This 207-nucleotide RNA was probed chemically with DMS and 2A3.
Conditions: 150 mM KOAc, 10 mM MgCl2 and 150 mM bicine (pH 8.5), 24 C.
DMS adducts were read by reverse transcription with MarathonRT.
For 2A3, 1,021 sequencing reads were counted.
Source: RMDB library OK3TST, as collected in RNAgym.
[RMDB]
RNA sequence: GGGAACGACUCGAGUAGAGUCGAAAAAAGUCCAUAUGCCCACCUUCGCUGGUACGGGUGGAUGCUUAUACAUGCUAUGGAUGCCUACAUUUGAAAUAAUGUAGAUGCCUAAUACUCUCUCUCAGGGAGAGAGUUUAGAUGCCUCCAAAGUGCAUGCCCACGAAAAUUUAUUCGUAAAUUUUCGUGGAAAAGAAACAACAACAACAAC
Reactivity to DMS in 0.01 (KOAc 150mM, MgCl2 10mM, bicine 150mM(pH8.5), 24C), signal-to-noise 1, nucleotides 027 to 156: a060a010g000u000c000c010a100u000a090u000g030c090c000c010a060c000c000u010u000c100g030c110u000g000g030u010a040c080g000g000g050u030g010g000a160u010g010c030u000u010a160u000a040c020a060u000g020c020u000a300u000g030g000a020u000g040c070c000u010a010c000a010u000u000u000g010a180a070a110u000a010a010u000g050u000a020g000a120u000g020c090c010u000a020a050u010a030c010u000c010u000c000u000c000u000c090a250g040g030g000a050g000a010g000a000g010u000u000u010a040g010a100u000g030c040c040u010c010c000a060a110a230g030u030g020c010a020u000g020c080
Reactivity to 2A3 in 0.01 (KOAc 150mM, MgCl2 10mM, bicine 150mM(pH8.5), 24C), signal-to-noise 2, nucleotides 027 to 156: a000a000g130u060c060c000a050u070a050u190g010c020c010c000a010c010c010u140u140c070g140c280u260g060g020u180a080c070g000g000g020u020g010g000a070u180g030c000u100u050a040u010a200c000a020u020g000c010u050a030u010g000g000a000u010g000c000c000u000a000c000a010u040u000u080g130a120a120a020u140a030a010u070g000u000a000g020a050u120g060c010c000u040a040a020u160a130c000u000c000u000c000u010c000u020c190a170g050g170g080a000g000a000g000a010g000u010u000u000a010g000a000u040g000c030c000u000c000c030a060a030a100g170u110g090c000a000u000g030c010